This 177-nucleotide RNA was probed chemically with 2A3 and DMS. It was measured as part of the RMDB library TTRDES. Values cover nucleotides 27 to 126. The reactions ran in a buffer of 150 mM KOAc, 10 mM MgCl2 and 150 mM bicine (pH 8.5), at 24 C.
RNA sequence: GGGAACGACUCGAGUAGAGUCGAAAAGAUAUGGAAUCACUACGGGAGCUCGCUACUCGGAAACGAGUAGUGAGCGAGGAUCGUAGGUGAUUCCUAAGUCAAAACAUUGCAGCUUCGGCUGCAAUGAGAACUCUACAGUGUUCGCACUGUAGAGUUCAAAAGAAACAACAACAACAAC
Reactivity to 2A3 in 0.01 (KOAc 150mM, MgCl2 10mM, bicine 150mM(pH8.5), 24C), signal-to-noise 1, nucleotides 027 to 126: g020a010u040a000u160g010g000a000a000u000c000a000c030u000a000c000g050g050g070a220g010c010u000c010g000c000u000a010c010u020c000g010g030a030a050a040c010g010a010g010u000a010g020u010g010a000g010c000g000a000g000g010a040u020c000g000u030a090g180g050u060g010a010u000u000c000c000u000a060a010g020u000c020a000a030a090a140c010a000u020u010g000c000a000g000c030u130u190c300g250g030c000u010g000c000a000a000u010g000a000
Reactivity to DMS in 0.01 (KOAc 150mM, MgCl2 10mM, bicine 150mM(pH8.5), 24C), signal-to-noise 2, nucleotides 027 to 126: g010a030u000a300u020g000g010a020a000u000c000a000c000u000a010c000g010g000g000a110g030c000u000c000g020c010u000a010c000u010c000g000g010a100a070a150c000g000a010g030u000a000g020u000g010a000g020c020g000a080g010g000a060u010c030g020u010a020g010g020u010g010a030u000u000c000c000u000a010a120g000u010c030a100a080a130a290c020a000u000u000g010c000a010g010c010u000u000c260g040g010c000u000g010c000a000a000u000g000a080